[RMDB]
RNA sequence: GGGAACGACUCGAGUAGAGUCGAAAAAUUAUGUCGCUUGGUAUAUAUGUAUUUAUAUACUUGACAUAUAUUACUUUACACCUCAGACAAUGGAAGAUUAUUCCAUGGAAGUUAAAGGCAAUAACAGUGUUAUCGUAGUGUUCGCACUACGAUAACAAAAAGAAACAACAACAACAAC
Reactivity to 2A3 in 0.01 (KOAc 150mM, MgCl2 10mM, bicine 150mM(pH8.5), 24C), signal-to-noise 2, nucleotides 027 to 126: a000u040u010a000u000g000u010c010g070c120u050u280g010g000u010a000u000a000u000a000u040g040u140a160u080u130u010a010u000a010u010a000c000u010u120g000a000c000a000u030a010u000a000u000u100a010c020u010u070u000a020c030a030c080c000u100c040a020g020a180c040a090a040u000g000g060a080a010g050a120u140u300a120u160u060c000c000a000u000g020g000a050a030g000u030u120a060a020a000g050g000c030a070a090u140a160a110c060a100g190
Reactivity to DMS in 0.01 (KOAc 150mM, MgCl2 10mM, bicine 150mM(pH8.5), 24C), signal-to-noise 4, nucleotides 027 to 126: a080u010u000a000u010g000u000c010g030c300u040u030g000g010u000a000u010a000u000a020u000g010u010a040u040u000u000a000u000a010u000a010c030u000u020g000a020c000a020u000a020u010a010u000u000a060c050u000u000u000a070c150a100c010c030u010c100a180g030a200c180a100a020u000g000g000a010a000g000a180u020u050a100u000u000c000c000a000u010g000g000a070a100g000u020u000a020a040a010g000g030c090a090a040u030a020a120c150a120g000